[RMDB]
RNA sequence: GGGAACGACUCGAGUAGAGUCGAAAAAGUGCAUCGUACGCGAUGCACAAAGGGUGAUGAAGGCCUGCACCAGGCCCCUUCCCCAACUGUGCUCUGCUCCUGAAGAGUGCUCGCUACGGCGAGCACAUAAACGUUGUAACUUCGGUUACAACGUUUAAAAAGAAACAACAACAACAAC
Reactivity to DMS in 0.01 (KOAc 150mM, MgCl2 10mM, bicine 150mM(pH8.5), 24C), signal-to-noise 4, nucleotides 027 to 126: a130g000u000g000c000a010u000c000g020u010a100c190g040c020g030a010u010g000c020a000c000a000a070a090g020g010g020u010g000a060u000g010a230a170g020g000c010c010u000g000c210a130c110c080a080g010g020c000c000c090c030u010u030c020c000c000c020a060a100c170u030g020u020g000c000u000c000u000g000c010u000c000c040u000g000a120a140g000a090g010u000g000c010u000c000g020c010u010a150c190g010g000c000g010a000g000c000a000c000a030
Reactivity to 2A3 in 0.01 (KOAc 150mM, MgCl2 10mM, bicine 150mM(pH8.5), 24C), signal-to-noise 6, nucleotides 027 to 126: a010g000u000g000c000a000u000c000g020u030a030c250g010c010g120a010u000g010c000a000c000a000a030a000g030g000g010u200g040a030u030g060a090a030g010g010c020c000u070g030c130a180c130c080a030g020g000c000c000c000c000u000u010c000c000c000c010a010a060c080u080g080u140g060c000u000c010u020g000c010u000c010c030u050g040a090a030g110a040g040u000g000c000u000c000g000c000u030a030c220g070g000c000g000a000g000c000a000c000a000